[RMDB]
RNA sequence: GGGAACGACUCGAGUAGAGUCGAAAAGAACCAGGCUUCGGCCUGGUUCAUAAUAACGCGGGCGUGGGACACAGCCGGACCUGGCCUCGGAUAGUCUCAGUAUAAUCUUAGCCUUCGGGCUAAGAAAUGAUACAUUAACCUUCGGGUUAAUGUAUCAAAAAGAAACAACAACAACAAC
Reactivity to 2A3 in 0.01 (KOAc 150mM, MgCl2 10mM, bicine 150mM(pH8.5), 24C), signal-to-noise 2, nucleotides 027 to 126: g060a000a000c000c000a000g000g010c010u080u170c270g030g020c020c040u030g000g000u000u000c000a000u000a010a010u000a000a050c120g020c150g060g030g000c030g050u060g020g050g010a020c030a010c050a170g120c100c000g020g010a040c000c010u030g070g000c000c020u040c020g000g020a040u050a060g040u000c000u000c000a020g040u090a070u080a300a150u020c000u000u020a000g000c000c000u020u060c220g070g000g000c000u000a000a010g010a010a030a010
Reactivity to DMS in 0.01 (KOAc 150mM, MgCl2 10mM, bicine 150mM(pH8.5), 24C), signal-to-noise 4, nucleotides 027 to 126: g010a010a010c000c000a010g000g020c000u000u010c250g040g030c010c010u000g010g010u000u000c000a010u010a040a050u000a080a100c120g020c130g020g000g010c030g020u000g010g010g020a130c040a080c140a090g010c070c060g010g010a110c030c030u000g010g000c030c030u000c040g010g000a100u000a090g000u000c010u000c030a130g020u000a100u000a100a130u000c000u000u000a010g000c000c000u000u010c200g040g010g010c000u000a000a010g010a010a040a040
An RNA of 177 nucleotides, treated with 2A3 and DMS and read out base by base.
Reactivities are given for positions 27 through 126.
DMS adducts were read by reverse transcription with MarathonRT.
The reactions ran in a buffer of 150 mM KOAc, 10 mM MgCl2 and 150 mM bicine (pH 8.5), at 24 C.
For DMS, 4,358 sequencing reads were counted.
2A3 adducts were read by reverse transcription with SuperScript II with manganese.